[RMDB]
RNA sequence: GGGAACGACUCGAGUAGAGUCGAAAAUGUGGUAGUGUUGGUUACACCAAGGAGGGUAGUGUGAUCAAUUUCUGUUACAUGCAUCAAAUGGAACUUGCUAAUGGUACACAUACCGGUUCAGCAUUUGUACUCUACUGGUUCGCCAGUAGAAAAAGAAACAACAACAACAAC
Reactivity to DMS in 0.01 (KOAc 150mM, MgCl2 10mM, bicine 150mM(pH8.5), 24C), signal-to-noise 9, nucleotides 027 to 129: u020g010u000g020g020u000a000g010u020g030u030u020g010g030u000u000a030c030a020c040c100a080a090g070g030a090g010g020g010u060a110g030u000g020u000g000a000u020c000a000a030u050u080u030c000u000g010u020u000a020c010a020u010g050c130a110u040c030a030a020a030u020g040g020a040a030c020u000u000g000c110u020a060a060u030g020g020u040a090c180a100c100a060u040a000c100c090g030g030u000u000c060a090g000c020a040u000u000u000g010u000a090c120
Reactivity to 2A3 in 0.01 (KOAc 150mM, MgCl2 10mM, bicine 150mM(pH8.5), 24C), signal-to-noise 9, nucleotides 027 to 129: u020g000u000g010g010u010a010g000u010g000u020u000g010g000u010u020a010c010a000c020c050a090a100g210g050a110g030g160g030u150a050g010u010g000u000g010a010u000c000a010a010u120u260u080c010u010g010u010u010a010c000a010u040g070c020a120u080c020a060a030a020u050g030g010a020a020c010u070u090g030c040u150a130a070u090g020g040u160a070c180a010c010a130u070a050c010c020g030g010u020u020c020a070g040c000a050u010u010u030g020u040a050c020
Chemical mapping of a 170-nucleotide RNA with DMS and 2A3.